[RMDB]
RNA sequence: GGGAACGACUCGAGUAGAGUCGAAAAUGUCAAGGAUUACGGCAAAAUUGUAACUGUUUGUCGUGGGCAUGUGUGUGUGCGUGGGAGUUUGAUGGAAACCGUAAAGUUAUAAACAAAAGCCGAGUUCUCAAUCGUUACUUUUCGAAGUAACGAUUGAAAAAGAAACAACAACAACAAC
Reactivity to DMS in 0.01 (KOAc 150mM, MgCl2 10mM, bicine 150mM(pH8.5), 24C), signal-to-noise 5, nucleotides 027 to 126: u000g010u000c040a140a110g000g010a120u000u010a040c010g020g000c010a020a040a060a060u020u010g010u010a060a090c130u010g010u000u000u000g010u000c020g020u010g010g000g010c050a040u000g010u010g030u010g010u010g020u000g010c060g020u000g020g010g000a070g010u000u000u010g000a080u000g010g010a080a070a090c050c050g010u000a050a050a070g000u010u010a070u020a070a070a090c120a050a060a110a160g000c070c040g010a090g010u010u000c080
Reactivity to 2A3 in 0.01 (KOAc 150mM, MgCl2 10mM, bicine 150mM(pH8.5), 24C), signal-to-noise 2, nucleotides 027 to 126: u120g010u040c060a090a040g050g040a130u060u130a060c010g000g000c020a000a020a040a110u070u150g070u080a040a050c030u070g080u080u050u060g040u020c010g000u040g030g020g010c040a060u060g030u030g000u000g000u000g000u020g070c020g040u040g000g020g020a100g000u050u050u070g080a070u060g050g020a070a060a030c000c010g020u090a050a060a040g010u050u040a150u110a100a210a020c040a020a060a030a020g010c040c070g040a060g020u090u000c010
Record summary:
An RNA of 177 nucleotides, treated with DMS and 2A3 and read out base by base. For DMS the reverse transcriptase was MarathonRT. Values cover nucleotides 27 to 126. The reactions ran in a buffer of 150 mM KOAc, 10 mM MgCl2 and 150 mM bicine (pH 8.5), at 24 C. 2A3 adducts were read by reverse transcription with SuperScript II with manganese.